[RMDB]
RNA sequence: GGGAACGACUCGAGUAGAGUCGAAAAUAAAAAGGUAAUGUAUCAGACGCAAUGAAGCCUCCACGUAGCAAAACCGAAAGGGUCUGAUACAUUACGACUGAAGGAGGCACGGUCAAAACAAAAAAAAUCAUGUAUAUGGGUUCGCCCAUAUACAUGAAAAAGAAACAACAACAACAAC
Reactivity to DMS in 0.01 (KOAc 150mM, MgCl2 10mM, bicine 150mM(pH8.5), 24C), signal-to-noise 2, nucleotides 027 to 126: u010a060a070a110a100a080g010g000u000a010a000u000g000u000a010u000c010a000g000a030c000g020c000a160a010u000g000a070a040g030c020c010u000c000c020a300c040g000u000a020g020c010a090a060a140a100c000c010g000a090a060a120g010g030g000u000c000u000g010a010u000a020c010a000u000u010a000c010g000a030c010u000g000a050a010g000g060a000g000g000c010a090c020g010g000u000c000a160a050a100a040c100a010a020a010a050a080a050a130a180
Reactivity to 2A3 in 0.01 (KOAc 150mM, MgCl2 10mM, bicine 150mM(pH8.5), 24C), signal-to-noise 2, nucleotides 027 to 126: u140a000a080a030a040a010g230g000u000a010a000u010g000u010a010u010c000a000g000a000c010g000c000a010a020u060g060a160a030g000c010c000u010c000c000a030c000g020u010a020g010c010a110a300a180a110c010c010g070a070a010a000g010g000g000u000c010u010g010a000u000a000c000a000u000u000a010c000g000a000c000u010g020a110a050g010g010a000g000g000c000a000c010g010g010u010c000a040a040a110a070c120a100a060a010a070a020a020a010a080
The record gives the reactivity of an RNA of 177 nucleotides to DMS and 2A3. As a SHAPE reagent, 2A3 marks flexible, mostly unpaired nucleotides at the ribose 2'-OH. For 2A3, 3,257 sequencing reads were counted. The DMS profile rests on 1,858 reads. The reactions ran in a buffer of 150 mM KOAc, 10 mM MgCl2 and 150 mM bicine (pH 8.5), at 24 C.